Overview:
Chemical mapping of a 207-nucleotide RNA with 2A3 and DMS. The RNA was probed in 150 mM KOAc, 10 mM MgCl2 and 150 mM bicine (pH 8.5) at 24 C.
RNA sequence: GGGAACGACUCGAGUAGAGUCGAAAAAAAGAUCCUAUAGUGAGACAUCUGUUGACUAUUGCGCGAACAUUACCCGAGUUGGACGCUGAAAUUGACAACCGUUUGGCGACUUUAGAAAAGAUCAACACUGACGUGUGUAUGGAUCCGGCUUCCGCAGCAACACAGUGAUAUUCGUAUCACUGUGUUGAAAAGAAACAACAACAACAAC
Reactivity to 2A3 in 0.01 (KOAc 150mM, MgCl2 10mM, bicine 150mM(pH8.5), 24C), signal-to-noise 4, nucleotides 027 to 156: a000a000a010g070a070u030c030c010u060a060u100a080g080u100g060a070g020a040c040a070u020c060u090g070u080u040g060a040c000u020a020u080u080g000c030g010c010g030a030a020c010a100u090u170a110c030c010c020g030a040g050u050u040g050g030a030c040g020c090u070g030a080a070a070u120u110g020a040c030a020a060c080c040g020u010u050u050g070g000c030g060a120c030u100u130u020a090g050a050a060a010a000g040a040u050c030a040a010c010a020c040u090g090a040c050g070u070g000u000g000u080a080u090g040g000a000u000c000c030g030g000c000u030u020c000c030g030c020a030g060
Reactivity to DMS in 0.01 (KOAc 150mM, MgCl2 10mM, bicine 150mM(pH8.5), 24C), signal-to-noise 3, nucleotides 027 to 156: a100a040a070g010a080u000c000c010u000a150u010a140g030u000g000a140g000a080c050a060u000c030u000g030u000u000g010a100c040u010a110u010u000g020c050g030c050g010a040a060c050a120u010u020a090c020c020c010g010a090g020u000u000g030g020a120c060g000c030u000g010a060a050a070u010u000g020a080c080a050a060c060c120g020u000u000u000g040g030c010g020a090c040u000u000u010a080g010a060a050a080a110g010a090u000c010a050a070c010a030c030u010g020a130c140g010u000g000u000g000u000a040u000g030g010a040u000c020c020g020g000c040u000u000c010c000g000c080a260g030
Annotation:
The 2A3 profile rests on 2,503 reads. It was measured as part of the RMDB library OK3TST.